[RMDB]
RNA sequence: GGGAACGACUCGAGUAGAGUCGAAAAUUUCAGGGAGUGAUCGAACAAUCGCAUCGGAAACGAGGCGAUAAGAUGAGCCGGGCCCGGCAGGGUGGUUUGCGACCGAACCGGCGGCACGUCCAGAGGGGCAAACAACACAGUUCGCUGUGUUGUUUGCAAAAGAAACAACAACAACAAC
Reactivity to DMS in 0.01 (KOAc 150mM, MgCl2 10mM, bicine 150mM(pH8.5), 24C), signal-to-noise 2, nucleotides 027 to 126: u000u000u000c030a130g030g030g010a170g010u000g000a050u000c080g000a100a150c300a080a000u000c000g030c000a030u020c010g000g020a070a080a120c010g000a000g040g010c000g010a000u000a010a130g030a060u020g000a120g000c000c010g030g000g000c040c000c010g000g000c300a090g000g010g030u000g010g000u000u000u030g010c240g010a160c040c000g000a030a040c010c030g010g040c010g000g000c040a000c090g050u000c040c010a160g000a110g000g000g040
Reactivity to 2A3 in 0.01 (KOAc 150mM, MgCl2 10mM, bicine 150mM(pH8.5), 24C), signal-to-noise 1, nucleotides 027 to 126: u030u040u020c020a050g000g050g000a020g040u140g020a070u040c010g040a040a020c020a030a040u020c000g010c000a000u000c000g020g000a000a080a050c000g000a030g000g000c000g000a000u030a010a030g100a080u110g020a000g010c030c020g040g000g020c000c000c000g110g000c210a070g070g000g000u000g000g080u040u020u070g040c020g000a010c010c010g010a000a000c010c000g000g000c000g000g030c000a000c030g140u030c000c020a000g020a060g020g030g060
Chemical mapping of a 177-nucleotide RNA with DMS and 2A3. For DMS, 2,652 sequencing reads were counted. Reactivities are given for positions 27 through 126. For 2A3 the reverse transcriptase was SuperScript II with manganese.